An RNA of 177 nucleotides, treated with DMS and 2A3 and read out base by base. High DMS reactivity at an A or C suggests that its Watson-Crick edge is free. Conditions: 150 mM KOAc, 10 mM MgCl2 and 150 mM bicine (pH 8.5), 24 C. For DMS, 1,123 sequencing reads were counted. It was measured as part of the RMDB library OK1LIB. For DMS the reverse transcriptase was MarathonRT. Values are in units of 0.01, from 0 to 300, in steps of 10.
[RMDB]
RNA sequence: GGGAACGACUCGAGUAGAGUCGAAAAUAUCAAUGCGAUCUCCGAAGUGUGCGAGGCGGCGGGUGCCGACGUUAGCCAGCUGGCCGAUGCGCUCGGAUACGACCCGCGGAUCGGACGCCAAUGCCUCCCUACGAAGGGGCUUCGGCCCCUUCGUAGGAAAAGAAACAACAACAACAAC
Reactivity to DMS in 0.01 (KOAc 150mM, MgCl2 10mM, bicine 150mM(pH8.5), 24C), signal-to-noise 1, nucleotides 027 to 126: u020a070u110c040a030a180u100g040c060g020a060u000c010u060c110c090g000a080a070g020u020g020u000g000c100g000a090g000g000c020g060g000c120g020g000g000u000g010c020c010g000a000c000g000u000u000a060g010c050c000a300g000c110u020g030g060c000c040g000a090u000g000c000g000c100u010c000g000g000a090u000a040c300g000a000c110c000c030g020c030g000g020a020u000c060g050g000a110c150g010c000c000a100a080u040g000c020c000u000c020
Reactivity to 2A3 in 0.01 (KOAc 150mM, MgCl2 10mM, bicine 150mM(pH8.5), 24C), signal-to-noise 2, nucleotides 027 to 126: u140a080u130c030a070a030u100g030c070g030a040u020c050u000c070c010g040a050a040g030u160g000u010g130c060g040a020g040g120c070g020g000c000g000g020g020u020g010c000c000g010a000c000g030u030u050a020g040c000c010a110g160c200u300g000g000c020c030g060a020u150g010c000g000c170u050c050g000g010a110u140a230c050g080a030c020c010c000g000c030g010g000a000u000c000g000g040a040c010g030c080c040a020a000u040g020c010c000u010c000